[RMDB]
RNA sequence: GGGAACGACUCGAGUAGAGUCGAAAAGCUGGUGUGACCGCGCAAGGUGCGCGCGGUACGUAUCGAGCAGCGCUCAACUCUGAAAAACAUCAAGACCAUGUGUCUCUAACUGUGCCACUCUGUGGUUAAAGUGACACCUUCGGGUGUCACAAAAGAAACAACAACAACAAC
Reactivity to DMS in 0.01 (KOAc 150mM, MgCl2 10mM, bicine 150mM(pH8.5), 24C), signal-to-noise 3, nucleotides 027 to 129: g140c000u020g000g030u020g010u000g010a030c030c010g050c000g040c020a190a120g070g040u050g040c140g010c050g060c020g010g020u050a020c030g030u000a050u030c090g000a020g010c000a100g020c030g000c110u030c000a090a090c000u000c050u050g000a020a020a050a050a040c080a070u050c050a120a050g080a210c050c000a090u030g000u050g020u000c020u060c120u050a070a110c070u020g030u010g040c050c060a040c020u070c110u040g040u000g060g000u000u000a000a040a030
Reactivity to 2A3 in 0.01 (KOAc 150mM, MgCl2 10mM, bicine 150mM(pH8.5), 24C), signal-to-noise 4, nucleotides 027 to 129: g010c000u010g000g000u020g020u000g000a030c000c000g000c000g000c040a040a090g250g050u140g090c060g000c000g010c000g060g000u010a020c030g030u000a040u050c040g020a000g010c040a010g020c010g000c020u020c020a010a020c000u010c010u130g150a060a050a030a040a010c050a080u100c100a120a020g070a070c030c030a050u130g030u050g030u060c000u000c010u060a040a080c030u070g050u070g030c040c020a010c010u130c000u080g020u000g010g000u040u060a080a010a000
The data come from the RNA Mapping Database (RMDB), library 15KLIB. Structure probing data (DMS and 2A3) for a 170-nucleotide construct. As a SHAPE reagent, 2A3 marks flexible, mostly unpaired nucleotides at the ribose 2'-OH. DMS adducts were read by reverse transcription with MarathonRT. The 2A3 profile rests on 7,299 reads.